[RMDB]
This 207-nucleotide RNA was probed chemically with DMS and 2A3. DMS adducts were read by reverse transcription with MarathonRT. The reactions ran in a buffer of 150 mM KOAc, 10 mM MgCl2 and 150 mM bicine (pH 8.5), at 24 C. Source: RMDB library OK3TST, as collected in RNAgym.
RNA sequence: GGGAACGACUCGAGUAGAGUCGAAAAAAGUCACACAGCUAGGAAGUAAGGGAGUCUGGAAUUGGAUCAAGGUCAUCUGCUAUGAAGCCGAGCUUCUUCCCACUGGGUUGAAAAUAAUCACAAGAACAACAUCAAGAACUACCAUCUGUAGCAUGGAGUAAUGCAUAGUAUUCGUACUAUGCAUUACAAAAGAAACAACAACAACAAC
Reactivity to DMS in 0.01 (KOAc 150mM, MgCl2 10mM, bicine 150mM(pH8.5), 24C), signal-to-noise 3, nucleotides 027 to 156: a060a080g000u000c010a080c040a050c070a070g030c020u010a090g050g000a080a110g010u000a070a070g000g020g020a060g020u000c040u010g040g000a080a100u000u000g010g020a100u000c040a060a100g020g010u010c040a080u000c030u010g000c060u010a080u020g010a090a090g020c010c020g010a140g020c040u010u000c050u010u010c000c000c020a130c090u000g020g020g010u000u000g000a060a070a030a070u000a060a090u010c040a090c090a050a060g030a060a110c040a040a040c050a060u000c050a060a110g000a090a050c030u010a000c010c030a060u000c040u010g020u000a050g030c040a080u000g020g010a300
Reactivity to 2A3 in 0.01 (KOAc 150mM, MgCl2 10mM, bicine 150mM(pH8.5), 24C), signal-to-noise 5, nucleotides 027 to 156: a000a000g090u080c050a060c010a010c010a020g020c050u060a020g020g060a110a050g030u120a050a060g040g010g010a040g040u030c060u040g050g040a100a060u100u080g040g010a040u060c050a090a050g030g030u030c010a060u010c040u040g020c020u040a040u210g080a050a010g010c030c030g030a020g000c000u050u040c000u010u020c000c010c000a040c060u060g000g000g040u030u020g060a040a060a020a020u180a020a040u100c050a030c030a130a030g080a090a020c030a030a030c000a050u100c040a040a080g080a080a050c020u090a040c030c020a040u040c050u110g080u080a030g010c040a030u030g010g010a050
The DMS profile rests on 7,897 reads.